[RMDB]
RNA sequence: GGGAACGACUCGAGUAGAGUCGAAAAGAUAUGGAGAUGGGAACUACGCUCAUGAUCUGGAGCGACGAAGGAGCUCGGAAACGAGCUCCAGAGCUCCAGAUUAAAUGAGCGCCCAUCUCCUAAGUCAGAUACUAUAAGGGUUCGCCCUUAUAGUAUCAAAAGAAACAACAACAACAAC
Reactivity to DMS in 0.01 (KOAc 150mM, MgCl2 10mM, bicine 150mM(pH8.5), 24C), signal-to-noise 2, nucleotides 027 to 126: g010a070u000a300u040g010g000a010g010a000u000g010g030g000a190a070c180u020a300c050g000c020u000c010a060u000g010a020u000c010u000g000g000a000g010c000g000a120c230g030a130a090g000g000a010g020c000u000c000g000g000a150a150a230c000g010a020g010c000u000c010c010a000g000a140g000c000u000c010c000a000g000a000u000u000a030a110a070u000g010a010g020c000g000c000c010c010a000u000c000u000c000c000u000a000a070g000u000c030a180
Reactivity to 2A3 in 0.01 (KOAc 150mM, MgCl2 10mM, bicine 150mM(pH8.5), 24C), signal-to-noise 2, nucleotides 027 to 126: g030a040u130a060u270g000g010a020g000a010u030g000g050g010a130a070c180u200a060c300g000c000u020c020a020u050g030a000u000c010u030g020g010a000g040c020g300a300c050g020a140a070g030g010a000g020c000u000c000g010g020a070a130a060c020g000a000g000c000u030c000c000a000g010a000g020c000u010c030c040a000g000a000u000u000a000a010a040u010g000a000g000c000g020c000c010c000a000u020c000u010c000c000u000a020a000g000u000c020a010

Chemical mapping of a 177-nucleotide RNA with DMS and 2A3.
For DMS, 2,111 sequencing reads were counted.
Source: RMDB library TTRINS, as collected in RNAgym.
Reactivities are rounded to 0.1 and cut off at 0 and 3.